[RMDB]
RNA sequence: GGGAACGACUCGAGUAGAGUCGAAAAGAGGAAUUUCGAUUCCUCAUGAUACCUUUGUGUUAGCCAGUAGAUAUUGUCAGGCUUGUCCCCAUUGGGGUAAGCCUUGGAUUUAUAUCGAACGCUAACACUCUGGUCGGACAGGCUGUUCGCAGCCUAAGGGAUUUAGUAUUUUCGAAUACUAAAUCCCAAAAGAAACAACAACAACAAC
Reactivity to 2A3 in 0.01 (KOAc 150mM, MgCl2 10mM, bicine 150mM(pH8.5), 24C), signal-to-noise 5, nucleotides 027 to 156: g010a000g000g050a020a020u100u160u190c200g080a060u020u080c010c000u000c010a020u070g000a020u040a020c010c000u000u000u020g000u000g000u000u010a000g000c000c000a010g000u010a010g020a010u000a000u020u020g020u010c010a000g020g010c030u010u000g080u140c000c000c000c040a300u180u300g000g000g000g000u010a020a000g000c000c000u010u060g040g010a000u120u300u080a020u010a010u000c000g000a000a000c010g000c000u000a000a000c000a010c000u000c000u000g000g020u030c060g080g050a070c070a090g000g010c000u030g030u090u180c250g010c140a000g000c000c000u020a060a130
Reactivity to DMS in 0.01 (KOAc 150mM, MgCl2 10mM, bicine 150mM(pH8.5), 24C), signal-to-noise 2, nucleotides 027 to 156: g000a030g020g010a030a020u010u010u010c290g000a080u000u000c000c010u000c000a030u010g010a270u010a030c020c000u010u020u020g010u000g010u000u000a030g000c000c050a140g030u010a150g020a030u000a010u000u010g020u000c020a060g000g020c000u000u020g020u000c010c000c010c270a300u000u000g110g000g050g020u000a000a020g020c000c020u000u020g010g020a030u000u000u000a030u000a020u010c020g000a110a150c250g000c000u000a000a040c000a020c000u000c050u000g010g020u010c110g020g000a090c090a170g000g020c000u010g010u000u000c220g030c050a060g000c000c000u010a070a300
Structure probing data (2A3 and DMS) for a 207-nucleotide construct. DMS adducts were read by reverse transcription with MarathonRT. The RNA was probed in 150 mM KOAc, 10 mM MgCl2 and 150 mM bicine (pH 8.5) at 24 C.